Conditions: 150 mM KOAc, 10 mM MgCl2 and 150 mM bicine (pH 8.5), 24 C. Structure probing data (DMS and 2A3) for a 207-nucleotide construct. It was measured as part of the RMDB library M2RFPK. DMS adducts were read by reverse transcription with MarathonRT. For 2A3, 1,372 sequencing reads were counted.
RNA sequence: GGGAACGACUCGAGUAGAGUCGAAAAAGGGCAGGGUGAAAUUCCCGAUCGGCGGUAAAGUCCGCGAGCCGAACGAAAAAGGUUUGGCAGGAACCGGUGAUAUUCCGGUACCGACAGUAUAGUCUGGAUGACCACUUCAGCUUCGGCUGAAGUGGAACUGACUAUUACCGUUCGCGGUAAUAGUCAGAAAAGAAACAACAACAACAAC
Reactivity to DMS in 0.01 (KOAc 150mM, MgCl2 10mM, bicine 150mM(pH8.5), 24C), signal-to-noise 2, nucleotides 027 to 156: a120g000g020g030c020a130g000g040g040u000g000a060a240a300u000u000c010c000c000g010a040u000c000g020g000c030g030g030u000a060a210a060g020u000c000c000g010c010g010a300g040c020c000g100a030a100c030g000a040a090a080a150a200g000g020u000u010u000g000g010c010a040g020g000a100a000c010c000g000g010u010g030a150u000a300u010u000c040c050g020g000u000a010c010c010g030a090c020a020g010u000a180u000a070g010u020c010u000g010g000a170u000g010a190c010c000a010c000u000u000c010a020g020c000u000u000c300g050g070c000u010g000a010a000g010u000g000g000a010a040
Reactivity to 2A3 in 0.01 (KOAc 150mM, MgCl2 10mM, bicine 150mM(pH8.5), 24C), signal-to-noise 1, nucleotides 027 to 156: a000g070g040g020c110a100g020g010g010u010g000a030a010a020u010u000c000c000c020g000a020u010c000g000g030c000g010g000u000a010a010a000g010u000c000c010g010c000g010a010g020c000c000g000a010a000c010g100a080a060a070a050a040g070g000u000u000u000g000g000c000a010g000g000a000a000c000c000g000g000u020g020a090u040a000u170u010c000c000g000g000u000a000c000c000g000a000c000a000g000u010a000u020a020g010u000c010u000g060g020a050u100g050a000c000c000a000c010u000u000c000a000g010c010u000u130c210g090g020c010u000g000a000a000g010u000g000g000a010a010